[RMDB]
RNA sequence: GGGAACGACUCGAGUAGAGUCGAAAAACGAAGGGUCCAAUGAAUUGAGAUUUGCCUAUUGGGAAGGGUCAUUUCAGGACAAAGAUGAUAAUGAUUCGGAGGUCUUGCAGGAUGGAACCAUGCAGGAGUACGCCACGGAAUUCGUUCCGUGGCGUACAAAAGAAACAACAACAACAAC
Reactivity to DMS in 0.01 (KOAc 150mM, MgCl2 10mM, bicine 150mM(pH8.5), 24C), signal-to-noise 2, nucleotides 027 to 126: a040c110g000a060a050g020g000g020u010c080c020a080a150u000g000a060a070u020u000g000a080g000a080u000u000u000g010c080c020u010a040u010u030g000g000g040a130a030g000g010g020u040c030a070u030u000u100c000a130g000g040a170c110a080a080a140g000a050u070g040a070u000a070a080u010g010a010u000u000c020g010g040a100g000g030u000c000u000u020g000c000a090g000g000a060u020g050g010a090a240c010c010a110u010g040c070a000g060g000a100
Reactivity to 2A3 in 0.01 (KOAc 150mM, MgCl2 10mM, bicine 150mM(pH8.5), 24C), signal-to-noise 3, nucleotides 027 to 126: a040c080g040a040a040g030g000g010u010c000c000a020a060u070g020a010a100u040u070g050a090g030a070u100u000u290g090c020c020u140a190u080u240g010g040g000a040a050g020g000g030u000c020a000u000u070u030c010a000g070g000a030c000a030a070a030g070a010u180g020a020u130a230a090u100g090a040u060u020c010g100g020a020g020g100u010c030u060u020g000c040a050g010g020a070u090g070g000a020a030c000c000a000u060g040c000a030g000g060a020